This 207-nucleotide RNA was probed chemically with 2A3 and DMS. For 2A3, 1,696 sequencing reads were counted. 2A3 adducts were read by reverse transcription with SuperScript II with manganese. Source: RMDB library OK3TST, as collected in RNAgym. For DMS, 5,217 sequencing reads were counted.

[RMDB]
RNA sequence: GGGAACGACUCGAGUAGAGUCGAAAACUACUUCUGCUAUUCCUGGUGCUGUCUCUGCAAUGGAAUCCACUGCUGGAGAGCUCAUUUCUUCUGCUUCUAAGAAGGUUGCCUCAAUUAUUCUCAAAGUGAUUGGUUUUACUCUAGUAAUUUUUGGAAAUGAUAAUGCACAAUUCGUUGUGCAUUAUCAAAAAGAAACAACAACAACAAC
Reactivity to 2A3 in 0.01 (KOAc 150mM, MgCl2 10mM, bicine 150mM(pH8.5), 24C), signal-to-noise 4, nucleotides 027 to 156: c020u050a020c010u050u050c020u050g060c010u020a030u080u090c020c020u040g050g060u050g030c030u030g020u080c010u010c020u080g010c050a070a130u050g030g040a080a040u000c020c030a040c080u040g050c040u070g010g020a030g010a030g060c030u040c090a070u080u110u040c010u030u000c010u030g070c020u100u020c030u080a080a070g030a070a030g080g000u040u030g040c000c020u050c010a030a070u110u050a070u130u070c120u020c070a090a100a030g020u030g050a100u030u070g030g030u020u030u060u100a030c020u000c010u030a030g030u060a070a210u170u090u050u140u130g080g020a100a080a030
Reactivity to DMS in 0.01 (KOAc 150mM, MgCl2 10mM, bicine 150mM(pH8.5), 24C), signal-to-noise 1, nucleotides 027 to 156: c010u010a030c020u010u000c010u000g000c010u010a120u000u000c000c010u000g020g040u000g030c010u000g010u000c010u000c010u000g010c020a050a070u000g000g000a170a120u000c020c020a040c090u000g040c020u010g060g010a100g030a120g040c030u000c060a050u010u010u000c020u010u010c020u010g010c040u010u010c080u000a050a140g000a090a040g000g040u000u000g000c070c020u000c060a040a050u000u010a080u000u000c050u000c010a050a080a090g000u000g010a100u000u000g020g010u010u000u000u030a030c060u010c030u010a050g000u010a030a100u000u000u000u000u000g020g000a090a090a180